[RMDB]
RNA sequence: GGGAACGACUCGAGUAGAGUCGAAAACCACAGAUCUUCGGAUCUGUGGAAACAACAAAUACUGUCAGUAGAGACAGACACAAAUACAUUGAGUGUACAAUGAAAGCGAUUGCUUCGGCAAUCGCAACUUCCUGUUGAGGUUCGCCUCAACAGGAAGAAAAGAAACAACAACAACAAC
Reactivity to 2A3 in 0.01 (KOAc 150mM, MgCl2 10mM, bicine 150mM(pH8.5), 24C), signal-to-noise 3, nucleotides 027 to 126: c000c000a000c000a010g010a020u000c000u000u210c210g130g000a010u010c000u000g000u000g000g030a050a070a020c020a000a020c020a010a110a070u160a150c020u010g000u030c040a070g100u150a060g220a020g000a150c020a000g080a030c000a020c020a060a230a010u280a060c040a070u040u110g030a070g140u130g020u100a060c010a020a100u160g120a180a070a010g020c010g000a000u020u040g000c000u010u070c160g080g000c000a040a000u000c000g000c000a000a010
Reactivity to DMS in 0.01 (KOAc 150mM, MgCl2 10mM, bicine 150mM(pH8.5), 24C), signal-to-noise 1, nucleotides 027 to 126: c000c000a000c000a000g000a000u000c000u000u010c190g020g000a030u010c000u020g000u000g030g000a000a030a100c070a130a070c070a070a100a130u000a170c010u000g040u000c000a100g010u000a110g030a090g010a000c010a000g000a090c170a090c230a000a120a130u010a090c120a120u010u000g000a300g000u010g000u010a090c200a060a030u000g000a070a200a160g000c000g000a000u000u000g060c000u000u000c190g000g070c000a000a000u000c000g010c000a000a040